[RMDB]
RNA sequence: GGGAACGACUCGAGUAGAGUCGAAAAUAUUGAUGGUUCUUUCAACUGUGAAGGUACGUCAUUUAGCUAUCGGGGAAUGAAUUAUCAUAAAGCAGUAAUGGUGGCCUCUUACACCAUUAAAUUAACUGAAGAGCGAGCCACUCUGAGCAUGGAUGAAUCAUGCAUGAGGAUUCGUCCUCAUGCAUGAAAAAGAAACAACAACAACAAC
Reactivity to DMS in 0.01 (KOAc 150mM, MgCl2 10mM, bicine 150mM(pH8.5), 24C), signal-to-noise 1, nucleotides 027 to 156: u010a120u000u010g000a070u010g020g030u000u000c010u030u010u020c040a090a080c140u000g000u000g000a120a080g020g030u000a020c040g030u010c020a080u000u000u010a080g040c110u010a070u010c080g050g000g000g000a070a080u010g010a080a070u000u000a020u000c020a090u000a050a150a120g020c030a050g010u000a080a150u000g000g010u000g010g000c070c020u000c040u000u000a090c060a020c000c000a050u020u000a030a050a120u010u000a050a130c090u000g030a090a050g020a040g000c000g020a140g010c010c050a040c030u000c050u030g000a110g020c050a090u000g000g000a070u000g000a090a160
Reactivity to 2A3 in 0.01 (KOAc 150mM, MgCl2 10mM, bicine 150mM(pH8.5), 24C), signal-to-noise 2, nucleotides 027 to 156: u160a010u060u090g020a010u030g030g010u050u070c040u060u100u080c090a140a110c100u160g040u090g130a060a010g070g000u030a000c030g020u000c020a000u080u130u030a010g000c060u030a010u230c080g040g000g010g000a040a100u060g020a080a000u160u040a020u100c030a030u100a190a070a030g020c020a030g060u100a050a070u040g000g010u000g010g000c010c020u030c000u000u030a010c000a000c030c000a020u060u010a000a000a060u030u090a040a040c010u010g030a030a010g010a050g070c040g020a010g020c000c000a020c010u000c010u070g030a000g080c030a020u020g000g130a070u210g110a010a070